Annotation: This 177-nucleotide RNA was probed chemically with 2A3 and DMS. The RNA was probed in 150 mM KOAc, 10 mM MgCl2 and 150 mM bicine (pH 8.5) at 24 C. Source: RMDB library OK1LIB, as collected in RNAgym.

[RMDB]
RNA sequence: GGGAACGACUCGAGUAGAGUCGAAAAAGUAUCGAGCCGAUCGCUUGAUACAAAUGCCAGCUAUGUGGCAAAGUGUCAUAGUUAUAGGGAUACGAACUAUGAAAGUAUCCAAGACUCAUAGGAGUCAGCAUUGUUGUAGGUUCGCCUACAACAAUGCAAAAGAAACAACAACAACAAC
Reactivity to 2A3 in 0.01 (KOAc 150mM, MgCl2 10mM, bicine 150mM(pH8.5), 24C), signal-to-noise 2, nucleotides 027 to 126: a000g000u020a030u000c000g020a000g000c010c050g070a180u070c040g010c000u000u000g000a000u020a000c000a010a050a000u040g000c000c000a000g000c010u010a000u010g000u020g030g000c000a130a130a000g130u040g090u040c000a000u000a000g020u000u050a070u110a140g030g000g000a000u010a000c010g090a100a040c120u040a110u300g280a100a010a000g010u000a000u000c000c000a020a000g010a000c000u000c010a050u180a180g220g000a000g000u000c000a000
Reactivity to DMS in 0.01 (KOAc 150mM, MgCl2 10mM, bicine 150mM(pH8.5), 24C), signal-to-noise 2, nucleotides 027 to 126: a070g000u020a000u000c000g000a010g000c030c300g010a050u090c160g000c000u030u000g000a010u010a000c020a060a110a090u000g000c020c000a060g000c060u000a020u000g020u030g000g020c010a050a060a090g000u020g030u000c000a000u000a000g000u000u080a060u010a120g000g000g000a050u000a000c000g000a090a170c150u000a080u010g020a070a060a070g000u030a000u000c010c000a110a050g030a000c000u000c010a200u040a070g020g050a000g030u000c000a100